Conditions: 150 mM KOAc, 10 mM MgCl2 and 150 mM bicine (pH 8.5), 24 C.
Structure probing data (2A3 and DMS) for a 207-nucleotide construct.
Reactivities are given for positions 27 through 156.
In probing experiments dimethyl sulfate is read out at A N1 and C N3, which are open when not base-paired.
For DMS the reverse transcriptase was MarathonRT.
For DMS, 13,916 sequencing reads were counted.

RNA sequence: GGGAACGACUCGAGUAGAGUCGAAAAGAUCUGCGCCGAUCCGAAACGCUAGCAAACAGCCCGCAUCAUGUCGUCUCCUAACUUCGACGUGGUGAAAUACUGAGCUUAAGCGAGUAAGCCUGUUAGCAAUAGAUCAGAACGUUCGCGUUCUGAUCAAUCAUUAUUGUACCUUCGGGUACAAUAAUGAAAAAGAAACAACAACAACAAC
Reactivity to 2A3 in 0.01 (KOAc 150mM, MgCl2 10mM, bicine 150mM(pH8.5), 24C), signal-to-noise 9, nucleotides 027 to 156: g030a050u030c020u080g030c050g020c060c040g040a050u020c020c030g050a060a060a020c040g000c040u050a010g010c040a070a070a140c020a050g030c010c000c030g030c000a010u010c000a000u010g010u010c000g030u010c050u090c090c090u130a160a170c070u070u040c020g010a000c000g010u000g000g010u010g020a020a020a000u170a030c030u030g040a020g020c000u080u100a090a010g060c030g060a030g100u050a030a030g020c010c020u050g020u070u090a020g010c030a090a130u040a190g010a000u000c000a000g000a000a000c000g010u050u050c200g010c000g100u000u000c020u000g000a000u000c000a000a000
Reactivity to DMS in 0.01 (KOAc 150mM, MgCl2 10mM, bicine 150mM(pH8.5), 24C), signal-to-noise 5, nucleotides 027 to 156: g000a080u000c010u000g030c050g020c050c060g010a100u000c030c040g000a090a080a090c080g030c020u010a030g010c020a060a120a170c140a130g000c020c010c040g000c050a040u000c020a040u010g020u000c010g020u000c100u000c110c050u010a090a100c060u000u000c000g020a020c000g060u000g000g000u000g010a050a090a130u010a120c050u010g010a130g010c010u000u000a070a250g010c030g000a100g010u000a080a120g010c000c060u000g020u000u000a090g050c050a070a120u010a120g010a020u000c010a010g000a020a020c000g030u000u010c300g030c020g030u000u000c000u000g000a010u000c000a020a070